Structure probing data (2A3 and DMS) for a 177-nucleotide construct. The data come from the RNA Mapping Database (RMDB), library OK2TRN. The reactions ran in a buffer of 150 mM KOAc, 10 mM MgCl2 and 150 mM bicine (pH 8.5), at 24 C. 2A3 adducts were read by reverse transcription with SuperScript II with manganese. Reactivities are given for positions 27 through 126.
[RMDB]
RNA sequence: GGGAACGACUCGAGUAGAGUCGAAAAAUGGGCCCUACCGGGUUACUGACCUUAGCCAAACUCCGAAUGCCGGUAAGUGAGAGCGCGGCAGUGAGACUGUGGGGGAUAAGCUCCAUGGUCGAGAGGGCAUAUGCGUAUCAUUCGUGAUACGCAUAUGAAAAGAAACAACAACAACAAC
Reactivity to 2A3 in 0.01 (KOAc 150mM, MgCl2 10mM, bicine 150mM(pH8.5), 24C), signal-to-noise 7, nucleotides 027 to 126: a000u050g020g020g030c000c000c000u020a070c030c040g050g000g040u040u060a070c020u100g170a180c000c010u020u120a020g010c020c020a080a090a060c030u030c020c000g080a190a080u140g090c040c010g070g030u080a100a050g060u070g080a130g000a010g050c040g000c010g050g000c010a020g030u050g060a070g000a010c000u020g000u010g000g010g000g050g050a100u110a260a090g070c000u000c010c000a010u010g010g000u020c010g010a020g010a010g010g020g000
Reactivity to DMS in 0.01 (KOAc 150mM, MgCl2 10mM, bicine 150mM(pH8.5), 24C), signal-to-noise 9, nucleotides 027 to 126: a110u010g010g010g010c010c010c010u000a090c170c110g000g010g010u000u000a060c120u010g010a160c020c020u000u000a120g010c030c030a070a160a140c040u010c010c040g010a150a110u010g010c040c020g000g010u010a060a110g010u000g000a170g010a090g020c040g010c290g000g000c020a050g000u000g000a150g010a010c000u000g020u000g000g000g000g000g000a170u010a090a160g010c000u000c000c000a010u000g010g010u000c000g000a100g000a060g000g010g010